About this RNA: Chemical mapping of a 207-nucleotide RNA with 2A3 and DMS. For DMS, 15,374 sequencing reads were counted. The RNA was probed in 150 mM KOAc, 10 mM MgCl2 and 150 mM bicine (pH 8.5) at 24 C.
RNA sequence: GGGAACGACUCGAGUAGAGUCGAAAACUGUGUGUGUGUGUGCAUGUGCAUGUGUGGGGUGUGCAGGUGCAUGGACCAGAUGUGCACACGAGGGUGUAGCUGUGCAUGUGUGCUGUGUGCGUGCAUGCAUGUGCGUGCACGUGAGCAUGUGUGCCUGAAUGUUAAUGGUUUUCGAACCAUUAACAUUAAAAGAAACAACAACAACAAC
Reactivity to 2A3 in 0.01 (KOAc 150mM, MgCl2 10mM, bicine 150mM(pH8.5), 24C), signal-to-noise 4, nucleotides 027 to 156: c040u010g020u010g000u000g000u000g000u000g020u010g070u030g020c050a040u070g030u020g030c020a030u010g020u020g020u060g050g020g000g010u040g010u020g000c030a030g030g090u080g040c020a030u040g030g050a050c030c020a000g030a170u130g060u060g020c000a010c020a000c050g030a090g050g060g000u060g020u040a030g030c070u040g050u090g020c030a020u030g010u010g000u010g010c030u010g040u050g060u120g110c010g010u010g010c000a000u020g000c020a040u160g110u190g030c020g010u020g000c000a000c010g020u030g020a010g000c000a020u040g010u000g020u020g040c010c010u040g070
Reactivity to DMS in 0.01 (KOAc 150mM, MgCl2 10mM, bicine 150mM(pH8.5), 24C), signal-to-noise 2, nucleotides 027 to 156: c050u050g010u000g020u000g040u000g010u000g020u000g010u000g000c020a050u000g020u000g010c030a040u010g030u010g010u000g010g000g020g000u010g020u000g020c020a120g020g040u010g000c020a050u000g020g030a200c040c040a080g010a130u010g010u000g000c020a030c030a060c030g010a130g010g000g020u000g010u000a090g030c030u010g020u010g000c020a040u000g030u000g010u000g030c010u010g030u010g040u010g020c020g030u000g000c010a020u000g030c040a100u010g020u010g020c000g030u010g000c000a010c010g020u000g000a100g030c030a070u000g000u000g030u000g000c000c030u010g010
DMS adducts were read by reverse transcription with MarathonRT. 2A3 is a SHAPE reagent: it acylates the 2'-hydroxyl of flexible nucleotides of all four kinds. Source: RMDB library OK3TST, as collected in RNAgym.